RNA sequence: GGGAACGACUCGAGUAGAGUCGAAAAGGGGCCAGCCUGACCAUGCUGCACCAGCCCACACCGCGCACCGACUUGGCCGUGUGGGCCGAGGACACCAUGACCGUCAUCGGCAUGAUCGAGGCCAAGGUAGUCCCAAUUGUUUCGACAAUUGGGACUAAAAAGAAACAACAACAACAAC
Reactivity to 2A3 in 0.01 (KOAc 150mM, MgCl2 10mM, bicine 150mM(pH8.5), 24C), signal-to-noise 3, nucleotides 027 to 126: g010g010g040g000c020c010a000g010c000c000u000g000a010c030c010a040u060g000c020u020g000c060a040c020c020a040g010c000c010c000a000c010a000c010c030g040c000g030c060a110c110c020g260a200c140u090u210g090g000c030c000g040u020g010u010g030g040g000c010c000g000a020g000g000a020c010a010c010c050a110u170g070a140c080c080g130u240c020a050u130c010g000g010c010a010u060g010a030u100c100g070a010g010g000c000c000a010a010g040g000
Reactivity to DMS in 0.01 (KOAc 150mM, MgCl2 10mM, bicine 150mM(pH8.5), 24C), signal-to-noise 4, nucleotides 027 to 126: g020g000g010g020c090c030a100g000c030c030u000g010a020c030c030a050u000g000c040u000g010c170a130c100c060a160g000c020c030c000a020c050a060c030c120g040c070g040c080a110c110c110g000a080c120u010u020g000g010c000c070g030u000g010u000g000g000g010c000c000g000a040g010g020a110c030a070c090c080a090u010g010a080c150c080g000u000c070a120u010c030g010g020c020a030u010g000a040u000c050g020a100g010g020c020c020a040a080g010g030